The record gives the reactivity of an RNA of 177 nucleotides to 2A3 and DMS.
For 2A3, 30,511 sequencing reads were counted.
Values cover nucleotides 27 to 126.
DMS adducts were read by reverse transcription with MarathonRT.
RNA sequence: GGGAACGACUCGAGUAGAGUCGAAAAAUGAAUGAAAAAUAUCAUAUCCCACGUGUAGCAAUCAUCUUUAAUGCCAUCAUUAGUAUGAUUAUGGUUACAUUAUUUAGAGAUUGGGGUACGCUAGCAGCGACUUAAAUACAUUCGUGUAUUUAAGUCGAAAAGAAACAACAACAACAAC
Reactivity to 2A3 in 0.01 (KOAc 150mM, MgCl2 10mM, bicine 150mM(pH8.5), 24C), signal-to-noise 9, nucleotides 027 to 126: a000u020g020a010a010u050g040a080a040a040a030a010u210a040u050c010a010u020a040u040c010c000c010a010c040g040u040g020u030a020g050c010a020a010u010c030a060u000c040u040u060u050a040a010u040g010c020c010a020u040c010a010u050u050a070g260u160a140u300g040a030u060u020a010u040g030g000u040u060a030c010a030u030u080a070u080u150u060a020g010a000g000a020u000u060g040g000g050g090u030a010c020g000c060u050a030g060c050a020g080
Reactivity to DMS in 0.01 (KOAc 150mM, MgCl2 10mM, bicine 150mM(pH8.5), 24C), signal-to-noise 9, nucleotides 027 to 126: a020u010g000a020a040u010g000a030a140a100a120a110u010a060u000c000a010u000a140u000c000c000c000a140c170g010u000g000u010a060g010c010a030a020u000c020a070u000c020u000u000u000a010a010u000g010c080c070a050u000c020a020u000u000a070g010u010a090u010g000a090u000u000a030u000g010g000u000u010a050c030a020u000u000a040u000u000u000a040g010a060g010a040u000u000g010g010g010g020u000a030c050g010c080u010a080g020c200a130g010